Conditions: 150 mM KOAc, 10 mM MgCl2 and 150 mM bicine (pH 8.5), 24 C. An RNA of 177 nucleotides, treated with DMS and 2A3 and read out base by base. The data come from the RNA Mapping Database (RMDB), library TTRDES. For DMS, 7,335 sequencing reads were counted. For DMS the reverse transcriptase was MarathonRT.
[RMDB]
RNA sequence: GGGAACGACUCGAGUAGAGUCGAAAAGAUAUGGAUGCCAUUUGCUUCGAUAAGAAUCUGUCGGAAACGACAGUAUUCUUUUGACGAAGGAAUGGCAUCCUAAGUCAAAGGGAGCUUCGGCUCCCAACUCAUAGUUGAUGUUCGCAUCAACUAUGAGAAAAGAAACAACAACAACAAC
Reactivity to DMS in 0.01 (KOAc 150mM, MgCl2 10mM, bicine 150mM(pH8.5), 24C), signal-to-noise 5, nucleotides 027 to 126: g000a030u000a300u000g000g000a010u000g020c000c000a010u010u010u000g010c020u000u010c000g020a190u010a020a010g000a030a010u000c010u000g000u000c000g010g000a140a080a270c000g010a020c000a010g020u010a000u000u000c000u000u000u000u000g010a210c110g000a030a010g000g000a010a010u000g000g000c000a010u000c000c000u000a010a070g000u000c030a110a150a230g000g010g010a010g020c000u010u020c270g000g000c000u000c000c000c000a010a020
Reactivity to 2A3 in 0.01 (KOAc 150mM, MgCl2 10mM, bicine 150mM(pH8.5), 24C), signal-to-noise 4, nucleotides 027 to 126: g060a020u080a060u180g000g020a000u010g010c000c030a030u030u000u130g300c020u010u000c010g050a060u030a110a000g000a010a010u000c000u000g000u000c000g030g040a130a080a070c020g000a010c010a000g000u050a010u010u000c010u010u040u020u100g110a080c020g010a000a000g000g030a000a000u000g020g000c010a000u000c000c000u000a010a000g000u000c010a020a050a120g010g000g020a010g010c010u100u170c300g130g000c000u020c000c000c000a010a000